RNA sequence: GGGAACGACUCGAGUAGAGUCGAAAAGUAAGUGGAACCCUGAUCCUUUAUUGGGGGGUACACUCGAGGAGUGGAAGGCGCUGCCCGGGGGGAACCGGAUUUACCUACGGGAAUCCCUGGGUUCCUCAUAGGCGCGGAUUCGUCCGCGCCAAAAGAAACAACAACAACAAC
Reactivity to 2A3 in 0.01 (KOAc 150mM, MgCl2 10mM, bicine 150mM(pH8.5), 24C), signal-to-noise 2, nucleotides 027 to 129: g050u050a050a010g040u010g000g030a110a080c010c000c000u020g080a040u120c000c030u100u100u220a070u090u070g010g000g000g000g030g000u040a010c000a010c050u030c090g040a030g000g000a020g000u030g030g020a140a070g000g010c010g000c030u070g010c000c010c000g000g000g000g000g010g000a000a000c040c000g010g010a000u050u050u270a230c000c010u010a080c010g030g020g010a000a000u020c000c060c000u000g040g000g010u010u000c020c000u000c010a090u040a140
Reactivity to DMS in 0.01 (KOAc 150mM, MgCl2 10mM, bicine 150mM(pH8.5), 24C), signal-to-noise 3, nucleotides 027 to 129: g000u010a080a000g060u000g000g030a190a140c020c000c030u050g100a090u110c130c100u050u040u190a120u050u060g050g120g000g000g050g000u010a170c050a000c000u000c070g000a060g000g120a060g000u010g020g000a010a060g000g000c120g070c070u120g070c050c040c000g070g000g000g040g090g000a090a070c040c000g070g000a000u010u130u040a030c300c000u000a030c050g000g020g060a040a120u090c000c000c090u080g050g010g000u020u000c000c020u010c070a070u020a150